[RMDB]
RNA sequence: GGGAACGACUCGAGUAGAGUCGAAAAACAUUGGCGCUCCAGCAAACUUGCGUGUUGUUGGUCAUGCCAUGCAAGGCACUCUUUUGAAGUUGACUGUCGAUGUUGCUAACCCUAGCACUCCAGCCUAAGACGAAUACGUUCGCGUAUUCGAAAAGAAACAACAACAACAAC
Reactivity to 2A3 in 0.01 (KOAc 150mM, MgCl2 10mM, bicine 150mM(pH8.5), 24C), signal-to-noise 9, nucleotides 027 to 129: a000c040a050u020u080g000g000c010g020c040u010c020c000a010g010c010a020a050a060c090u220u300g050c080g120u260g040u070u010g000u000u010g010g030u070c040a060u140g010c000c000a000u050g020c040a040a040g040g000c040a020c030u050c000u000u120u090u140g080a110a050g040u120u090g070a110c030u020g020u060c040g040a080u070g030u140u020g010c020u040a130a140c000c000c030u010a000g010c000a010c030u000c030c030a030g020c010c020u070a070a030g100a050
Reactivity to DMS in 0.01 (KOAc 150mM, MgCl2 10mM, bicine 150mM(pH8.5), 24C), signal-to-noise 9, nucleotides 027 to 129: a040c070a060u010u000g010g020c020g040c070u000c050c020a060g020c020a050a050a060c060u040u030g030c140g040u050g000u020u000g000u010u010g000g020u040c140a150u040g030c040c030a030u020g020c160a110a070g040g010c050a060c080u020c030u030u030u000u040g020a010a040g040u040u030g000a110c070u030g030u020c050g000a040u030g030u000u000g000c000u050a070a110c090c060c080u000a070g010c000a030c050u020c030c020a090g010c040c050u020a050a080g020a220